An RNA of 177 nucleotides, treated with DMS and 2A3 and read out base by base. The data come from the RNA Mapping Database (RMDB), library OK1LIB. DMS adducts were read by reverse transcription with MarathonRT. The RNA was probed in 150 mM KOAc, 10 mM MgCl2 and 150 mM bicine (pH 8.5) at 24 C. For DMS, 4,509 sequencing reads were counted. For 2A3 the reverse transcriptase was SuperScript II with manganese.
RNA sequence: GGGAACGACUCGAGUAGAGUCGAAAAACAUUUUUGGCCUCUCUAUUAAUAUAUCAUUUUAGCUAGAGCCAAAUGCAAUCACAGAGACACAAAUGUUCUUUGGUUCAUGAGUGCCCUCUGAAAAGUAAGCGAUAAUUUUAUUCGUAAAAUUAUCGCUAAAAGAAACAACAACAACAAC
Reactivity to DMS in 0.01 (KOAc 150mM, MgCl2 10mM, bicine 150mM(pH8.5), 24C), signal-to-noise 3, nucleotides 027 to 126: a170c010a060u010u020u000u000u000g000g000c030c020u000c000u000c000u000a000u070u000a010a020u040a190u090a160u040c100a060u010u000u010u000a030g020c110u010a020g020a100g010c010c010a010a020a020u050g030c170a090a120u040c180a150c000a000g000a000g010a300c020a010c000a040a210a060u000g000u000u000c020u010u060u040g010g000u000u010c000a010u000g000a300g010u000g000c080c070c000u000c000u010g000a080a070a040a130g030u010a110
Reactivity to 2A3 in 0.01 (KOAc 150mM, MgCl2 10mM, bicine 150mM(pH8.5), 24C), signal-to-noise 7, nucleotides 027 to 126: a000c030a090u080u040u010u010u050g000g010c020c000u010c000u000c000u020a030u120u060a150a070u140a060u100a080u260c050a050u040u040u030u010a020g000c040u020a000g000a020g010c000c000a000a010a010u070g020c050a030a060u080c030a030c010a070g010a010g020a020c000a000c000a020a060a030u030g010u030u010c050u100u210u280g260g000u020u020c010a010u030g000a000g040u010g000c050c140c000u000c000u030g030a050a030a020a020g140u150a080